[RMDB]
RNA sequence: GGGAACGACUCGAGUAGAGUCGAAAAGCUCGAGCUUGCGCUGGCAGAUCCCGCGCUGCACAGCAAUCCGGCCGAGGCGCGCAGAGUCGGGCGCCGGUUUGCCCGAUUGGCCCCGAUCGUCGCAACCUAUGGUAACAUGCUUCGGCAUGUUACCAUAAAAAGAAACAACAACAACAAC
Reactivity to 2A3 in 0.01 (KOAc 150mM, MgCl2 10mM, bicine 150mM(pH8.5), 24C), signal-to-noise 1, nucleotides 027 to 126: g040c000u020c040g010a010g030c000u110u100g070c050g030c040u000g010g000c010a010g020a150u120c000c010c000g020c120g010c010u010g000c120a150c000a300g030c020a020a120u020c020c000g030g030c020c020g000a030g060g010c040g040c000g040c070a050g030a050g170u030c030g000g010g000c110g010c030c030g020g000u050u050u110g090c020c020c000g020a040u030u040g020g000c000c000c020c000g000a010u020c000g050u100c020g000c010a030a070c000c000
Reactivity to DMS in 0.01 (KOAc 150mM, MgCl2 10mM, bicine 150mM(pH8.5), 24C), signal-to-noise 2, nucleotides 027 to 126: g020c020u000c030g020a140g010c030u010u010g030c250g030c050u000g000g010c030a070g010a030u010c050c050c030g020c130g020c010u000g010c020a090c050a020g000c010a080a130u010c160c100g000g010c000c030g000a060g010g010c080g010c060g000c070a090g010a130g000u020c010g030g010g020c140g000c040c030g020g000u010u000u010g000c060c020c000g000a020u000u010g000g000c000c010c020c000g000a080u000c040g030u000c030g020c020a120a140c040c030